Structure probing data (2A3 and DMS) for a 177-nucleotide construct.
DMS adducts were read by reverse transcription with MarathonRT.
Reactivities are given for positions 27 through 126.
The data come from the RNA Mapping Database (RMDB), library TTRDES.
2A3 adducts were read by reverse transcription with SuperScript II with manganese.
In probing experiments dimethyl sulfate is read out at A N1 and C N3, which are open when not base-paired.
RNA sequence: GGGAACGACUCGAGUAGAGUCGAAAAGAUAUGGAUAUUCUCCUCAGGCGAAGAACUACGAUCGGAAACGAUCGUAGGGAGCCUGUGCGGAGAGAUAUCCUAAGUCAAAGACGUGUUCGCACGUCAAGUAGUAAUUUAUGUUCGCAUAAAUUACUACAAAAGAAACAACAACAACAAC
Reactivity to 2A3 in 0.01 (KOAc 150mM, MgCl2 10mM, bicine 150mM(pH8.5), 24C), signal-to-noise 6, nucleotides 027 to 126: g030a040u130a040u180g000g000a000u010a010u040u030c010u000c010c000u030c020a000g020g000c020g300a300a020g010a120a000c000u000a000c020g000a000u000c000g040g000a070a080a070c010g000a000u000c010g000u010a000g000g000g000a000g000c010c010u000g030u070g060c130g000g020a020g030a030g030a010u000a000u020c000c000u020a140a020g080u050c060a140a040a090g000a000c010g000u020g030u080u200c300g040c120a010c020g000u000c000a000a010
Reactivity to DMS in 0.01 (KOAc 150mM, MgCl2 10mM, bicine 150mM(pH8.5), 24C), signal-to-noise 7, nucleotides 027 to 126: g010a050u000a300u000g000g000a010u000a000u000u000c000u000c000c000u000c010a010g010g000c000g000a110a180g010a150a170c020u000a010c000g010a020u000c000g000g000a170a120a260c010g010a010u000c000g010u000a010g000g000g010a110g010c000c000u000g010u010g000c280g010g000a020g010a030g000a030u000a000u000c000c000u010a040a140g010u000c040a100a120a190g000a010c000g020u000g010u000u010c240g020c010a010c000g000u000c000a070a130